RNA sequence: GGGAACGACUCGAGUAGAGUCGAAAAUUUCAGGCUGUGUGGAUCAUGCAGCCUGUCUAACACCUUCUGAAUGCUGCCAUUACAACAUGAAAGAAGACAUGGGUAAUAAAUAAACAAAUGGAUAUGGUUAUAUGCCAAUAAAGCUUUACUUGUAGAAUACGAUAAAUCCCUUCGGGGAUUUAUCGUAAAAAGAAACAACAACAACAAC
Reactivity to 2A3 in 0.01 (KOAc 150mM, MgCl2 10mM, bicine 150mM(pH8.5), 24C), signal-to-noise 1, nucleotides 027 to 156: u010u020u000c010a020g000g020c000u000g060u010g000u120g180g060a210u200c070a040u000g000c000a000g000c010c000u000g000u000c000u020a030a030c010a090c030c000u030u090c060u170g040a030a010u030g040c000u040g000c050c020a030u100u030a040c020a100a050c020a080u060g180a300a110a080g070a020a000g020a080c010a040u030g010g000g000u030a020a020u070a160a000a060u140a110a050a000c020a000a050a020u040g030g000a030u010a000u180g040g010u070u020a160u010a010u210g040c000c000a000a010u180a280a030a020g030c000u060u130u080a010c030u130u000g000u000a000g000a150a050

Annotation:
The record gives the reactivity of an RNA of 207 nucleotides to 2A3. Conditions: 150 mM KOAc, 10 mM MgCl2 and 150 mM bicine (pH 8.5), 24 C. The 2A3 profile rests on 437 reads.